[RMDB]
RNA sequence: GGGAACGACUCGAGUAGAGUCGAAAAAAUGGUCUUUGGCUUGACAACACAGUCUGGUGCCCACGACACGUAAUGUGCCCGGCUGACCAGUUGUCUGAUCCUAAUUAUGAUGCCUUGUUGAUUUCUACAAACAUGAAAAGUUCGCUUUUCAUGUUUGAAAAGAAACAACAACAACAAC
Reactivity to 2A3 in 0.01 (KOAc 150mM, MgCl2 10mM, bicine 150mM(pH8.5), 24C), signal-to-noise 2, nucleotides 027 to 126: a000a000u170g030g020u010c030u070u050u100g030g000c030u020u100g000a000c020a010a000c040a000c010a000g010u030c040u100g000g030u100g050c000c030c000a030c040g130a020c030a020c120g060u100a080a110u100g000u020g000c000c000c000g000g000c000u010g010a050c000c030a020g000u000u040g030u000c060u040g020a050u050c000c000u010a040a020u110u100a100u110g100a070u130g000c000c060u030u010g010u010u020g110a300u020u020u010c000u020a020
Reactivity to DMS in 0.01 (KOAc 150mM, MgCl2 10mM, bicine 150mM(pH8.5), 24C), signal-to-noise 3, nucleotides 027 to 126: a090a050u010g010g010u010c050u000u000u000g000g010c070u010u000g010a020c010a040a010c030a130c040a050g010u000c010u010g060g000u000g000c020c110c080a100c090g000a110c120a070c120g010u010a150a100u000g010u000g000c000c010c070g000g000c020u000g000a030c070c060a040g020u010u000g010u000c010u000g020a080u000c010c010u010a070a090u010u010a100u000g000a120u010g010c070c080u000u000g000u000u010g000a150u000u000u010c010u000a160
Overview: This 177-nucleotide RNA was probed chemically with 2A3 and DMS. The reactions ran in a buffer of 150 mM KOAc, 10 mM MgCl2 and 150 mM bicine (pH 8.5), at 24 C. The DMS profile rests on 2,353 reads. 2A3 adducts were read by reverse transcription with SuperScript II with manganese.